[RMDB]
RNA sequence: GGGAACGACUCGAGUAGAGUCGAAAAGCCACCGUCUCUGGCACCAUUCUCUGCGGAGGCACGGUGGUGGAGGUCGACGAGGAGGAUGAAACCUUGGAGAGUGGCGGAUCGCACGCGCGCGUGGCCGCCAUGGUGGCUCAUUCGUGAGCCACCAUGGAAAAGAAACAACAACAACAAC
Reactivity to 2A3 in 0.01 (KOAc 150mM, MgCl2 10mM, bicine 150mM(pH8.5), 24C), signal-to-noise 9, nucleotides 027 to 126: g010c000c000a010c000c020g060u020c010u010c010u070g300g010c040a040c030c030a160u210u080c110u040c040u100g020c030g050g020a010g010g020c100a020c080g020g020u040g000g020u050g010g040a050g000g040u080c040g020a060c030g010a040g020g000a020g040g000a030u070g080a080a090a060c030c020u030u060g050g010a070g000a030g060u060g020g010c030g020g030a090u090c040g010c100a040c030g070c020g010c000g000c020g040u050g050g010c010c000g000
Reactivity to DMS in 0.01 (KOAc 150mM, MgCl2 10mM, bicine 150mM(pH8.5), 24C), signal-to-noise 6, nucleotides 027 to 126: g000c010c000a010c010c010g020u030c010u000c000u010g010g010c010a060c190c130a120u010u020c080u030c100u020g000c000g020g000a030g000g000c160a070c050g000g020u000g000g020u010g000g000a080g010g020u000c030g010a130c040g000a090g000g000a050g010g010a100u030g010a130a110a120c050c020u000u000g010g000a090g010a080g020u000g000g000c010g010g000a180u010c080g020c030a090c090g000c110g000c070g000c030g020u010g000g000c020c000g010

Structure probing data (2A3 and DMS) for a 177-nucleotide construct.
For DMS the reverse transcriptase was MarathonRT.